[RMDB]
RNA sequence: GGGAACGACUCGAGUAGAGUCGAAAAGGGGUCGUUGGAGUACGUUUCGCAGUCUCUUUUGACGAACUGAAGCCUCCACGGUUCGAUAAGAGACUGAACUACGAAAUAAAACAACGACGGAGGCACCCAAACGUUGAACCCUUCGGGGUUCAACGAAGAUAAACCUGCAGUUCGCUGCAGGUUUAUCAAAAGAAACAACAACAACAAC
Reactivity to 2A3 in 0.01 (KOAc 150mM, MgCl2 10mM, bicine 150mM(pH8.5), 24C), signal-to-noise 1, nucleotides 027 to 156: g040g020g000g000u000c000g000u000u010g060g040a130g110u180a080c160g000u050u020u090c130g010c020a000g000u000c000u020c000u030u080u120u060g200a130c070g000a000a000c000u020g040a150a010g000c000c010u000c000c000a020c000g000g020u010u000c010g010a020u000a260a050g000a020g010a000c030u020g040a120a040c070u140a040c110g020a030a020a030u230a010a110a010a010c010a000a010c010g040a010c000g010g010a000g010g020c000a030c000c000c000a060a020a020c010g000u000u010g000a000a000c000c000c050u020u090c260g030g000g050g010u000u000c010a000a000c000g090a000a000